RNA sequence: GGGAACGACUCGAGUAGAGUCGAAAAAAAAAACGCUGGGAUCAUGUAAUCUCAGGAACGGGAGCGUUCUGAAGCGCGCACGGAACGCUUUGAUCGUUUAUUGGAGAUGAUGAUCCUGUGCUGAAGCGCGCACGGCAACCGAAAGGUGCGAAAAAAAGUAUAAGGAAUACUUCGGUAUUCCUUAUACAAAAGAAACAACAACAACAAC
Reactivity to 2A3 in 0.01 (KOAc 150mM, MgCl2 10mM, bicine 150mM(pH8.5), 24C), signal-to-noise 2, nucleotides 027 to 156: a000a000a000a000a000a000c020g050c010u010g020g010g010a020u000c010a030u010g100u260a230a100u020c000u000c010a020g110g000a000a000c000g010g000g010a020g000c000g010u010u000c010u020g060a200a100g000c000g020c000g030c000a000c000g010g000a000a010c000g010c010u290u140u020g000a000u000c010g010u000u000u030a230u130u270g180g000a010g010a010u060g010a000u010g010a000u000c010c000u010g000u000g000c010u010g020a120a040g000c020g000c000g000c010a000c000g000g000c010a000a000c000c000g060a070a040a030g010g020u000g020c000g080a210a010a000a000a020a000a020